[RMDB]
The data come from the RNA Mapping Database (RMDB), library OK2TRN. Structure probing data (2A3 and DMS) for a 177-nucleotide construct. 2A3 adducts were read by reverse transcription with SuperScript II with manganese. For DMS the reverse transcriptase was MarathonRT. Reactivities are given for positions 27 through 126.

RNA sequence: GGGAACGACUCGAGUAGAGUCGAAAAGAUGACAGUAAAUAUGAUGUGCUUGACAUUAGGAAAUUAGGACAUUAUCUGUUAACUAAUGAUAGGAAAUUAAAAAGAGAAUACUCCAAAUGUGGUUUGGUAUACACUGCUGUUUCGACAGCAGUGUAUAAAAAGAAACAACAACAACAAC
Reactivity to 2A3 in 0.01 (KOAc 150mM, MgCl2 10mM, bicine 150mM(pH8.5), 24C), signal-to-noise 1, nucleotides 027 to 126: g060a020u150g020a050c030a020g060u180a110a110a090u240a050u180g030a000u060g080u020g040c000u030u050g060a000c000a140u210u230a050g050g240a070a050a280u090u070a030g060g020a000c000a000u060u060a050u160c000u000g020u000u000a000a060c000u090a010a160u170g080a000u110a030g000g080a250a160a000u000u090a060a120a060a140a000g030a000g030a000a080u120a120c020u070c030c140a010a100a050u050g050u090g000g130u030u030u030g010g000
Reactivity to DMS in 0.01 (KOAc 150mM, MgCl2 10mM, bicine 150mM(pH8.5), 24C), signal-to-noise 2, nucleotides 027 to 126: g010a110u000g000a040c060a030g030u030a130a110a100u000a100u010g000a020u000g040u000g020c020u000u000g020a150c120a120u000u010a080g010g000a050a080a150u010u010a020g000g000a050c060a030u000u000a060u010c060u010g000u010u000a020a200c080u000a050a070u000g000a140u000a120g000g000a050a070a080u010u020a040a030a080a080a110g000a160g000a040a080u000a060c130u000c000c000a010a060a060u000g010u020g030g020u000u000u000g000g000